[RMDB]
Structure probing data (DMS and 2A3) for a 177-nucleotide construct. The data come from the RNA Mapping Database (RMDB), library OK2TRN. Values cover nucleotides 27 to 126. The DMS profile rests on 4,813 reads. 2A3 adducts were read by reverse transcription with SuperScript II with manganese.

RNA sequence: GGGAACGACUCGAGUAGAGUCGAAAACUAGCGGACUCGGGUGGCACCCGUCCACCGUGAAAUCCGCGACGCGGUGUCGGCGUGUCGCGUCGCAAUUUUCACGCUCGCGACCGCCCUGGGCGUGCCGUAAAUCCGGUAGUUUCGACUACCGGAUUUAAAAAGAAACAACAACAACAAC
Reactivity to DMS in 0.01 (KOAc 150mM, MgCl2 10mM, bicine 150mM(pH8.5), 24C), signal-to-noise 4, nucleotides 027 to 126: c050u010a100g010c010g000g000a050c120u000c080g000g020g030u010g010g000c030a150c210c180c180g020u010c020c010a020c020c000g000u010g010a040a050a140u000c050c010g000c000g010a020c080g010c020g010g020u010g000u010c170g000g010c010g000u010g000u000c000g020c000g010u000c190g010c070a050a060u000u010u020u010c180a100c100g000c080u000c020g000c010g000a040c020c020g000c000c000c050u010g010g010g020c020g010u000g010c040c020g010
Reactivity to 2A3 in 0.01 (KOAc 150mM, MgCl2 10mM, bicine 150mM(pH8.5), 24C), signal-to-noise 2, nucleotides 027 to 126: c030u030a040g000c010g000g020a020c010u010c030g100g030g020u030g000g030c020a140c060c070c000g060u100c010c010a000c010c010g090u070g030a100a060a060u020c020c010g010c020g010a000c010g020c040g050g130u050g090u200c030g020g050c030g080u240g000u040c010g000c010g020u050c120g000c020a030a040u090u070u100u190c100a070c110g000c020u010c000g010c000g010a000c010c020g020c010c000c000u010g020g100g010c040g020u080g040c020c010g060